[RMDB]
RNA sequence: GGGAACGACUCGAGUAGAGUCGAAAAGAAAUGUCCACAGCCGUUUUGACCGAAGCGUCUUCGGACGGGCCAAAUGCGAGUCGGCGGCUGGAGAUGCUGUUAGGCCCGUUUAAGCAUCGGACUAGAAGGGCGGGUGUUUGUUCGCAGGCAUUCGCCCAAAAGAAACAACAACAACAAC
Reactivity to 2A3 in 0.01 (KOAc 150mM, MgCl2 10mM, bicine 150mM(pH8.5), 24C), signal-to-noise 9, nucleotides 027 to 126: g100a000a080a020u150g000u000c000c000a010c010a020g000c000c000g030u030u050u180u290g020a020c000c010g050a080a010g100c010g040u020c010u040u070c130g090g000a010c000g010g040g010c040c030a090a140a050u230g060c040g030a080g070u020c010g010g010c000g000g000c000u000g000g010a090g000a000u020g000c010u010g070u220u140a080g040g040c000c000c010g030u060u080u070a040a010g000c000a000u010c020g000g000a010c020u030a030g070a180a110
Reactivity to DMS in 0.01 (KOAc 150mM, MgCl2 10mM, bicine 150mM(pH8.5), 24C), signal-to-noise 9, nucleotides 027 to 126: g010a070a080a060u020g010u000c000c010a300c020a010g000c000c010g010u000u000u030u040g020a020c020c030g010a090a100g010c040g010u000c020u010u050c120g010g000a030c010g010g010g000c120c120a090a160a090u030g010c030g010a120g030u000c010g000g000c010g000g000c000u000g010g000a080g000a010u000g000c000u000g000u020u020a100g010g000c010c000c000g000u020u020u030a110a040g000c010a020u000c010g010g010a020c010u010a100g000a120a120